[RMDB]
RNA sequence: GGGAACGACUCGAGUAGAGUCGAAAAAACAGCUGCACGAACGUACGAGCAGUUUUCGAAAUAAACGUACGUACGAAAUAAAUAAAUUCUACUCGAUGCGAAACAAAGCAAAGUCGUUCCCAGGGAAACAUCAUAGGCUAUUCGUAGCCUAUGAUGUAAAAGAAACAACAACAACAAC
Reactivity to DMS in 0.01 (KOAc 150mM, MgCl2 10mM, bicine 150mM(pH8.5), 24C), signal-to-noise 2, nucleotides 027 to 126: a020a020c120a110g000c010u000g020c060a140c090g000a130a080c020g020u000a010c000g000a170g000c060a110g000u010u000u000u000c100g030a070a010a070u000a010a080a090c000g050u000a070c030g000u000a120c060g000a060a020a110u010a050a070a100u000a100a050a050u030u000c000u000a000c000u000c000g010a270u000g030c000g050a150a090a060c300a080a130a160g010c000a080a180a020g010u000c020g000u000u000c000c000c000a010g010g010g000a170a100
Reactivity to 2A3 in 0.01 (KOAc 150mM, MgCl2 10mM, bicine 150mM(pH8.5), 24C), signal-to-noise 3, nucleotides 027 to 126: a000a000c130a030g060c050u130g030c030a020c090g050a140a020c020g030u040a010c010g020a010g050c050a020g010u000u020u040u090c060g060a100a050a030u160a020a120a020c030g020u050a000c020g020u040a000c020g070a100a050a080u190a040a070a000u110a020a030a010u050u000c000u000a000c000u000c000g020a040u080g020c010g050a140a110a070c070a040a070a010g010c010a000a130a000g000u000c010g000u020u000c000c000c000a010g010g000g010a060a110

Source information:
Structure probing data (DMS and 2A3) for a 177-nucleotide construct. 2A3 adducts were read by reverse transcription with SuperScript II with manganese. The DMS profile rests on 1,558 reads. The data come from the RNA Mapping Database (RMDB), library M2PK90.